[RMDB]
RNA sequence: GGGAACGACUCGAGUAGAGUCGAAAAAGUGCCGCAUGACCCGAAGAAAGCACUCGAGAGGCUGUUCUUCUUUCGUAACCAUCGGGCCUAACGUCGUCGGAGACAAUUGCACGUUCCGGCUAAUUCGAGAAACAUCGUCUAUUUUGCAGAAAGCGGCUAACCCCUAAGCUUUCGAGCUUAGGGGUUAAAAAGAAACAACAACAACAAC
Reactivity to 2A3 in 0.01 (KOAc 150mM, MgCl2 10mM, bicine 150mM(pH8.5), 24C), signal-to-noise 2, nucleotides 027 to 156: a000g040u030g010c000c030g000c030a050u100g100a160c000c020c060g010a040a000g010a040a080a000g020c030a050c120u090c140g130a160g000a020g040g010c030u050g090u090u080c020u070u010c000u040u100u050c050g020u020a080a080c030c010a060u060c060g010g030g000c020c020u100a100a010c020g070u030c000g010u000c020g060g010a070g050a040c070a070a150u160u190g000c040a030c090g040u080u000c020c000g010g000c010u020a050a020u090u050c020g010a010g060a080a140a020c070a090u070c020g020u000c020u040a120u120u130u080u110g000c000a010g070a060a100a000g040c010g000g010c050
Reactivity to DMS in 0.01 (KOAc 150mM, MgCl2 10mM, bicine 150mM(pH8.5), 24C), signal-to-noise 3, nucleotides 027 to 156: a060g020u010g000c000c020g020c000a190u000g030a150c030c000c010g010a070a100g010a060a070a060g000c020a060c060u010c050g010a140g020a100g040g020c080u010g010u010u000c060u000u000c000u010u040u000c070g020u010a100a130c030c020a210u000c010g040g010g020c010c020u030a070a110c110g020u000c070g000u000c050g000g000a170g010a090c040a080a130u000u000g030c040a060c040g010u000u000c020c030g020g020c040u000a050a150u000u020c020g000a150g010a170a080a090c050a080u000c060g010u000c050u000a160u000u000u000u020g020c030a100g000a030a090a150g020c030g020g000c030